RNA sequence: GGGAACGACUCGAGUAGAGUCGAAAAUACGCCAGGUAUCGACGAUUUACCUAGAUAAUACCCCAUUAAGUCAAUAUCGCAAGGCACGCUCAUCGGCCGUUUCAAUUGGCGAAACAGGCGGCAAGUUAACUUCACCGCGGCGAUUAAUUCCGGCUCACCAUGGACAUUUGUUCGCAAAUGUCCAUGGAAAAGAAACAACAACAACAAC
Reactivity to DMS in 0.01 (KOAc 150mM, MgCl2 10mM, bicine 150mM(pH8.5), 24C), signal-to-noise 1, nucleotides 027 to 156: u020a120c090g010c010c020a180g030g010u000a030u000c010g030a110c010g010a180u000u010u000a070c000c000u000a080g000a070u010a100a200u000a130c050c000c000c010a090u010u000a150a170g000u030c080a060a140u010a040u000c040g010c160a140a080g000g010c020a100c040g010c000u000c030a090u000c040g010g020c000c010g030u000u000u010c040a100a090u010u050g030g010c000g000a070a060a070c030a080g010g040c020g040g060c030a020a070g050u000u010a070a110c090u010u000c010a100c020c000g030c090g050g000c030g000a050u000u000a030a300u010u000c020c030g030g000c020u000c020a150
Reactivity to 2A3 in 0.01 (KOAc 150mM, MgCl2 10mM, bicine 150mM(pH8.5), 24C), signal-to-noise 2, nucleotides 027 to 156: u100a060c100g020c010c000a010g030g010u000a030u100c040g140a110c010g010a050u000u050u240a070c000c020u050a060g030a100u160a140a030u060a110c000c000c000c000a060u120u100a110a000g020u060c020a040a050u050a040u130c010g060c140a070a020g060g000c020a070c130g000c000u060c000a070u110c060g030g000c010c040g010u020u020u000c070a070a040u110u080g050g010c020g030a020a010a020c060a020g040g000c010g000g000c000a050a000g040u080u110a080a090c090u070u060c050a050c050c000g000c000g000g090c020g000a000u130u030a070a050u150u030c050c000g020g040c050u070c000a030